Annotation:
This 207-nucleotide RNA was probed chemically with DMS and 2A3.
RNA sequence: GGGAACGACUCGAGUAGAGUCGAAAACGCGAUAUGCCUCGCGCGCAGCGUCACGAACAGUCACGUCUGUGGCGAUGAUAUCAAGCAUAAAAAGAUGUGCGUCACCGUUAUGAUAGGACUGUUACUCAAACACGGUGAAGACUAGCCGGUAAGAGCAACCAUAUGCAUCGUUCGCGAUGCAUAUGGUAAAAGAAACAACAACAACAAC
Reactivity to DMS in 0.01 (KOAc 150mM, MgCl2 10mM, bicine 150mM(pH8.5), 24C), signal-to-noise 3, nucleotides 027 to 156: c030g010c010g000a130u010a060u010g000c060c050u000c010g010c010g050c040g020c040a060g000c010g010u000c000a060c040g050a080a050c010a150g000u010c170a060c100g020u000c010u070g060u000g000g010c020g000a020u000g010a110u000a060u010c040a040a150g000c030a070u010a020a000a150a050a120g000a170u010g010u000g010c010g050u000c010a000c000c000g010u000u000a220u010g010a090u010a070g020g010a090c030u000g050u000u000a070c080u000c030a080a100a170c160a070c010g000g030u010g000a070a090g000a060c050u000a250g020c030c030g020g030u010a070a130g000a110g000c030a140
Reactivity to 2A3 in 0.01 (KOAc 150mM, MgCl2 10mM, bicine 150mM(pH8.5), 24C), signal-to-noise 6, nucleotides 027 to 156: c100g000c030g020a020u020a000u150g290c010c020u020c020g020c020g030c020g010c020a010g000c000g010u020c020a010c040g100a220a100c070a100g030u020c020a010c050g060u060c050u020g000u030g020g000c000g010a020u030g010a000u010a020u050c040a030a050g030c020a030u180a070a110a020a030a010g140a120u150g020u080g090c060g030u030c000a010c030c010g020u060u060a060u050g060a050u070a110g100g060a060c110u110g060u170u100a070c040u040c040a040a050a000c070a010c080g000g000u020g030a020a010g030a050c060u060a030g020c020c000g100g050u140a140a040g060a010g040c020a010
The RNA was probed in 150 mM KOAc, 10 mM MgCl2 and 150 mM bicine (pH 8.5) at 24 C. The DMS profile rests on 4,495 reads.